[RMDB]
The data come from the RNA Mapping Database (RMDB), library M2RFPK. The record gives the reactivity of an RNA of 207 nucleotides to 2A3 and DMS. As a SHAPE reagent, 2A3 marks flexible, mostly unpaired nucleotides at the ribose 2'-OH. The RNA was probed in 150 mM KOAc, 10 mM MgCl2 and 150 mM bicine (pH 8.5) at 24 C. For DMS the reverse transcriptase was MarathonRT.
RNA sequence: GGGAACGACUCGAGUAGAGUCGAAAACAGAACUGUAUGGGCCGUGUGCUUAACCAGGACAAGAUCUCCUUCUCUCCAACGUUGUUGCCAACUCAUGAUUCUCCUAACCUGUGCUUGGAGAGACGUGCUACCAUAUAGGUGUUCGCACCUAUAUGAAGUUAACUAGUAAGUUCGCUUACUAGUUAACAAAAGAAACAACAACAACAAC
Reactivity to 2A3 in 0.01 (KOAc 150mM, MgCl2 10mM, bicine 150mM(pH8.5), 24C), signal-to-noise 3, nucleotides 027 to 156: c060a020g110a090a040c010u070g030u110a090u160g060g030g000c070c030g240u130g090u200g070c030u050u060a010a050c040c010a020g010g070a030c070a110a060g050a140u020c030u030c010c000u070u000c020u000c010u000c030c010a040a040c090g020u000u000g000u020u000g000c030c030a070a050c060u010c050a040u080g090a240u120u030c030u050c040c020u020a050a070c020c060u120g060u140g120c050u050u030g000g000a020g000a000g010a010c000g040u040g030c040u070a120c040c000a000u010a000u000a000g000g000u000g000u000u040c170g000c060a000c010c010u000a000u000a000u010g000a020a010
Reactivity to DMS in 0.01 (KOAc 150mM, MgCl2 10mM, bicine 150mM(pH8.5), 24C), signal-to-noise 3, nucleotides 027 to 156: c060a130g000a070a100c060u000g030u000a090u010g020g010g000c010c040g050u020g060u000g020c030u000u010a070a110c120c030a070g020g010a130c060a070a080g000a150u000c040u000c010c020u010u000c020u000c010u000c020c020a050a100c070g030u000u000g010u010u010g010c000c040a050a140c090u050c040a060u000g030a130u000u000c030u000c040c020u010a040a040c040c090u010g010u000g020c040u000u020g040g000a060g010a040g020a070c090g040u000g030c050u000a160c090c010a040u000a010u000a010g010g060u000g000u000u010c290g020c010a030c010c000u000a010u000a000u000g020a030a150